[RMDB]
RNA sequence: GGGAACGACUCGAGUAGAGUCGAAAAGAUAUGGACGCUCACGACAUGCGGAUUGUCGGAAACGACAAAUCGCAACAGCGUGGCGUCCUAAGUCAAACUUGAUACCCAACUUCGGUUGGGUAUCAAGCGACAACAAUCUGUUCGCAGAUUGUUGUCGAAAAGAAACAACAACAACAAC
Reactivity to 2A3 in 0.01 (KOAc 150mM, MgCl2 10mM, bicine 150mM(pH8.5), 24C), signal-to-noise 4, nucleotides 027 to 126: g010a000u030a010u050g000g000a010c000g020c060u300c290a010c010g230a110c100a200u300g000c010g010g020a020u010u000g000u010c010g000g040a030a010a000c010g010a000c000a010a020a050u040c010g030c040a270a300c100a150g000c000g000u000g000g000c000g000u000c000c000u010a000a000g010u010c000a030a030a130c010u000u000g000a010u010a000c000c000c010a000a010c020u070u080c210g200g000u000u000g000g010g010u000a000u000c000a000a000g000
Reactivity to DMS in 0.01 (KOAc 150mM, MgCl2 10mM, bicine 150mM(pH8.5), 24C), signal-to-noise 4, nucleotides 027 to 126: g000a030u000a220u010g000g000a010c000g010c000u020c020a000c000g010a040c120a190u010g020c010g010g010a070u000u000g010u000c000g020g010a030a030a090c000g020a000c000a000a000a040u000c010g020c010a110a150c260a170g010c030g020u000g010g000c000g000u000c010c000u000a000a060g010u010c020a120a140a300c010u000u000g010a010u000a000c000c000c000a000a010c000u000u020c190g020g020u000u000g000g010g010u000a000u000c000a000a020g010
This 177-nucleotide RNA was probed chemically with 2A3 and DMS. For DMS the reverse transcriptase was MarathonRT.